Chemical mapping of a 177-nucleotide RNA with DMS and 2A3. 2A3 is a SHAPE reagent: it acylates the 2'-hydroxyl of flexible nucleotides of all four kinds. For DMS, 7,984 sequencing reads were counted. It was measured as part of the RMDB library OK2TST.
[RMDB]
RNA sequence: GGGAACGACUCGAGUAGAGUCGAAAAGUUCAUUUAACUGAGGUGCUGGGAGCAAUAAAAGCUGUGAUUGGGUAGGGCUGCUCCAUAUAAGCAUGAUUAGAGAUCCCUAUGAAGGAUGAUUGCUACCUCAAAAUAGGUGUUUCGACACCUAUUUUGAAAAAGAAACAACAACAACAAC
Reactivity to DMS in 0.01 (KOAc 150mM, MgCl2 10mM, bicine 150mM(pH8.5), 24C), signal-to-noise 6, nucleotides 027 to 126: g010u000u000c080a100u000u000u010a070a120c060u000g010a100g020g010u000g000c050u000g000g010g010a040g020c040a100a110u010a080a110a130a090g010c040u000g020u000g000a130u000u000g010g010g010u010a060g010g000g020c050u000g000c030u000c010c020a080u000a050u010a080a050g010c030a020u000g010a120u010u010a080g010a140g000a090u000c010c010c000u000a190u010g000a090a090g000g000a050u000g000a100u000u000g010c030u000a070c080c060
Reactivity to 2A3 in 0.01 (KOAc 150mM, MgCl2 10mM, bicine 150mM(pH8.5), 24C), signal-to-noise 3, nucleotides 027 to 126: g020u030u040c050a040u120u090u170a130a080c060u060g030a020g060g040u060g000c020u060g040g000g010a000g010c020a040a030u160a260a160a020a010g030c030u030g050u090g120a190u130u180g020g020g040u010a020g010g060g030c030u040g010c000u000c000c020a020u040a010u020a140a000g020c010a010u060g050a130u120u090a020g000a000g000a090u030c000c020c000u050a100u200g060a060a020g040g010a010u040g010a040u070u100g040c010u030a060c000c000

The RNA was probed in 150 mM KOAc, 10 mM MgCl2 and 150 mM bicine (pH 8.5) at 24 C.